[RMDB]
RNA sequence: GGGAACGACUCGAGUAGAGUCGAAAACUGCGCUGAGCCCUUCUCCCCCAGCUUGCCUGUGUCCAAGGGAAUUGGAAGGUCAUCCUUCACAGGAUCGUGUGGAAGUCCUGCUCGGGGCGGAAGCAUUAUAAACCUUAGACGUUCGCGUCUAAGGUAACAAGAGUAUAGUGUUCGCACUAUACUCUUGAAAAGAAACAACAACAACAAC
Reactivity to 2A3 in 0.01 (KOAc 150mM, MgCl2 10mM, bicine 150mM(pH8.5), 24C), signal-to-noise 6, nucleotides 027 to 156: c040u080g020c060g020c100u130g050a070g010c040c020c030u130u070c080u080c010c020c000c000c000a000g010c020u050u100g020c010c020u020g020u020g030u040c050c020a020a030g030g010g040a100a110u100u060g050g030a060a050g040g020u070c010a080u100c020c000u050u060c010a010c000a040g040g020a110u110c060g020u070g000u040g070g020a020a020g030u050c000c020u020g030c040u050c080g010g020g000g000c010g010g030a020a000g020c020a000u060u090a070u160a080a120a030c000c000u000u000a000g000a000c000g030u050u030c140g000c000g100u010c000u000a000a000g000g000u000a000a010
Reactivity to DMS in 0.01 (KOAc 150mM, MgCl2 10mM, bicine 150mM(pH8.5), 24C), signal-to-noise 4, nucleotides 027 to 156: c030u010g000c040g030c020u010g000a120g000c030c030c030u000u000c040u020c030c000c010c030c020a150g010c040u000u000g010c030c010u010g010u000g020u010c050c050a070a130g020g010g010a060a130u000u000g010g010a070a050g010g020u000c050a100u010c020c010u010u020c090a090c040a040g020g010a030u000c060g020u010g040u000g020g010a180a120g000u010c010c000u000g010c070u000c090g010g010g010g030c030g010g010a200a140g010c040a100u000u010a100u010a040a100a070c000c000u010u000a000g000a020c000g040u000u000c280g010c030g020u000c000u000a010a010g020g010u000a000a050